[RMDB]
This 177-nucleotide RNA was probed chemically with DMS and 2A3. The 2A3 profile rests on 183,762 reads. For DMS the reverse transcriptase was MarathonRT. 2A3 adducts were read by reverse transcription with SuperScript II with manganese. The reactions ran in a buffer of 150 mM KOAc, 10 mM MgCl2 and 150 mM bicine (pH 8.5), at 24 C.

RNA sequence: GGGAACGACUCGAGUAGAGUCGAAAAGCUAGAGCGUGGCUGCGAAGCGGUCGUGUCGUAUUAGGCCGGAUAUGCGACGUCAGUUUGAUCCUGACCGGCCUAAGGAUCUUACUGGUGCUCUAGGAAAGGCGUGUGCGCGGUUCGCUGCGUAUAUGCCAAAAGAAACAACAACAACAAC
Reactivity to DMS in 0.01 (KOAc 150mM, MgCl2 10mM, bicine 150mM(pH8.5), 24C), signal-to-noise 9, nucleotides 027 to 126: g010c010u000a010g000a010g010c000g020u010g010g000c000u000g010c020g010a070a130g020c010g020g010u000c010g020u010g010u000c020g020u010a040u010u010a070g000g010c010c010g000g010a190u030a050u010g000c020g010a010c020g010u010c000a010g010u000u000u000g000a020u000c010c000u000g000a170c050c030g000g000c010c010u000a050a010g000g000a010u000c010u000u000a010c010u000g000g000u010g010c000u000c000u000a010g000g010a060a100a090
Reactivity to 2A3 in 0.01 (KOAc 150mM, MgCl2 10mM, bicine 150mM(pH8.5), 24C), signal-to-noise 9, nucleotides 027 to 126: g060c000u010a000g000a000g000c010g010u030g010g000c010u010g010c110g170a200a040g030c010g000g000u010c010g020u010g000u020c010g000u010a050u040u090a060g060g040c020c020g020g010a070u080a020u120g020c010g000a000c000g010u020c000a000g000u000u020u020g000a010u000c000c000u020g030a070c040c030g020g000c000c000u000a020a010g000g000a000u000c000u000u010a010c000u000g010g010u030g000c000u000c000u000a010g010g040a060a090a010